Structure probing data (2A3 and DMS) for a 177-nucleotide construct. Conditions: 150 mM KOAc, 10 mM MgCl2 and 150 mM bicine (pH 8.5), 24 C. For 2A3, 2,168 sequencing reads were counted.
[RMDB]
RNA sequence: GGGAACGACUCGAGUAGAGUCGAAAACGCUAUCGCGCGAUACGCAUAGCGAUACGCAUACGCAUACGCAUACGCGCGAUAUAUUAUGCGUAUUAUCGCCGCAUAUAUAUAGCGUAUAUAGCGCGCAAGGUCGUAGGAUGUUCGCAUCCUACGACCUAAAAGAAACAACAACAACAAC
Reactivity to 2A3 in 0.01 (KOAc 150mM, MgCl2 10mM, bicine 150mM(pH8.5), 24C), signal-to-noise 2, nucleotides 027 to 126: c060g040c040u050a010u090c040g000c010g000c020g050a080u050a070c030g010c050a060u070a040g030c030g000a000u030a020c140g040c060a020u050a060c030g000c030a020u020a080c080g000c030a020u060a160c100g080c000g010c010g060a000u020a010u000a000u050u130a020u010g010c000g000u000a060u060u060a050u040c040g070c080c020g080c180a040u140a000u030a000u010a010u090a260g010c010g040u010a000u010a000u000a010g010c040g010c030g020c050a060
Reactivity to DMS in 0.01 (KOAc 150mM, MgCl2 10mM, bicine 150mM(pH8.5), 24C), signal-to-noise 2, nucleotides 027 to 126: c000g020c160u010a010u000c110g000c000g040c070g000a070u000a080c040g000c000a020u010a050g020c010g010a100u000a070c300g000c290a040u000a110c030g000c020a090u000a030c010g020c010a020u020a110c290g040c090g010c030g000a050u000a010u000a030u000u000a000u000g010c000g010u000a030u000u020a050u000c070g010c100c100g040c050a030u000a070u010a030u010a060u000a110g050c000g020u000a010u010a000u000a170g020c010g020c050g010c250a050